[RMDB]
RNA sequence: GGGAACGACUCGAGUAGAGUCGAAAAUUAAGACAGCAGGACGGUGGCCAUGGAAGUCGGCAUCCGCUAAGGAGUGUGUAACAACUCACCUGCCAAAUGGACUAGCCCUGAAAAUGGAUGACGCUAGCUACGGUAUACUCUUCGGAGUAUACCGUAGAAAAGAAACAACAACAACAAC
Reactivity to 2A3 in 0.01 (KOAc 150mM, MgCl2 10mM, bicine 150mM(pH8.5), 24C), signal-to-noise 1, nucleotides 027 to 126: u080u030a050a000g100a030c030a020g000c000a000g000g000a010c020g050g010u030g090g020c010c000a030u020g020g030a000a010g000u000c030g000g000c000a020u010c000c000g000c010u020a010a030g020g000a030g010u020g010u000g000u040a040a000c000a010a010c000u010c000a020c000c000u010g010c000c010a050a130a080u150g030g020a020c010u000a000g010c000c000c000u020g070a070a060a010a050u240g040g020a080u070g090a030c140g000c010u020a010g000
Reactivity to DMS in 0.01 (KOAc 150mM, MgCl2 10mM, bicine 150mM(pH8.5), 24C), signal-to-noise 2, nucleotides 027 to 126: u000u020a050a090g030a150c210a080g000c000a000g000g010a010c020g010g000u000g000g000c010c000a070u020g010g000a130a080g000u000c160g000g000c000a040u000c010c010g030c020u000a050a030g030g000a090g010u000g020u010g000u020a150a130c090a090a010c010u000c020a050c020c000u000g000c000c050a020a090a080u010g010g010a180c030u000a020g020c020c000c020u000g010a060a060a110a190u030g000g000a120u010g010a140c130g020c020u000a030g010